[RMDB]
Chemical mapping of a 177-nucleotide RNA with DMS and 2A3. The 2A3 profile rests on 7,026 reads. Conditions: 150 mM KOAc, 10 mM MgCl2 and 150 mM bicine (pH 8.5), 24 C. Values cover nucleotides 27 to 126. For DMS, 8,623 sequencing reads were counted.
RNA sequence: GGGAACGACUCGAGUAGAGUCGAAAACAGCUCCGUACAGUAGAACUGUCUUGACGUUCGUAUUGAAGAUUAUCACUUUGAUAAUUGUUGACAGUUUUUUUGAGUUCAAUAUGUUCUUCAAUCGUAGCAUUAAUCCACGUUUCGACGUGGAUUAAUGAAAAGAAACAACAACAACAAC
Reactivity to DMS in 0.01 (KOAc 150mM, MgCl2 10mM, bicine 150mM(pH8.5), 24C), signal-to-noise 4, nucleotides 027 to 126: c100a120g000c070u010c020c090g000u020a080c140a110g010u000a060g030a030a290c030u000g000u010c030u010u010g020a060c070g010u010u010c060g010u010a070u000u010g010a060a050g000a020u010u000a010u000c080a150c160u020u060u030g020a010u000a000a030u010u010g010u010u010g010a040c070a110g000u000u010u000u020u000u030u000g020a100g010u000u000c040a060a070u010a040u000g000u010u000c030u030u000c040a040a050u010c110g000u010a100g030
Reactivity to 2A3 in 0.01 (KOAc 150mM, MgCl2 10mM, bicine 150mM(pH8.5), 24C), signal-to-noise 9, nucleotides 027 to 126: c040a020g040c020u020c030c040g100u160a070c030a050g120u120a020g040a140a030c010u020g030u040c020u050u120g040a030c050g070u040u060c050g010u100a040u040u080g030a040a040g040a060u040u020a020u090c060a040c260u220u160u250g020a010u010a060a030u040u080g050u040u040g040a030c030a070g060u010u010u000u010u010u100u200g140a100g020u030u020c010a040a040u070a050u180g050u010u020c010u070u030c020a020a140u110c080g110u100a030g040